This 177-nucleotide RNA was probed chemically with DMS and 2A3. Reactivities are given for positions 27 through 126. For DMS the reverse transcriptase was MarathonRT. Source: RMDB library TTRDEL, as collected in RNAgym. The reactions ran in a buffer of 150 mM KOAc, 10 mM MgCl2 and 150 mM bicine (pH 8.5), at 24 C. For 2A3 the reverse transcriptase was SuperScript II with manganese.

RNA sequence: GGGAACGACUCGAGUAGAGUCGAAAAGAUAUGGAGUAAGGAUAACUUGUCAGAGAAACUUGUCGGAAACGACAAGUCUCUUGGAUUUAGACCUUACUCCUAAGUCAAAGGUAAGUUCGCUUACCAACCCAUUCUUAUGGUUCGCCAUAAGAAUGGGAAAAGAAACAACAACAACAAC
Reactivity to DMS in 0.01 (KOAc 150mM, MgCl2 10mM, bicine 150mM(pH8.5), 24C), signal-to-noise 3, nucleotides 027 to 126: g000a010u010a300u000g000g010a020g000u000a000a000g010g010a180u000a040a070c060u000u000g000u000c010a160g010a000g000a020a010a000c000u000u000g000u010c000g010g000a150a050a130c010g010a000c000a000a000g000u000c010u000c000u000u010g000g000a020u000u000u000a020g010a150c010c000u000u010a000c000u000c000c000u010a000a110g000u000c020a080a090a130g000g010u000a000a010g010u000u000c260g020c000u000u000a000c010c000a100a170
Reactivity to 2A3 in 0.01 (KOAc 150mM, MgCl2 10mM, bicine 150mM(pH8.5), 24C), signal-to-noise 1, nucleotides 027 to 126: g030a010u100a050u170g000g000a000g010u000a010a000g020g040a130u060a260a120c020u030u070g050u050c040a020g000a000g020a080a090a040c000u010u000g000u010c000g010g040a060a040a080c000g020a010c000a000a000g010u020c000u000c000u000u050g040g000a030u250u170u210a000g020a060c000c000u010u000a000c000u000c000c000u000a030a010g000u010c050a100a050a060g000g000u000a020a020g020u030u170c290g040c140u010u010a010c010c010a020a170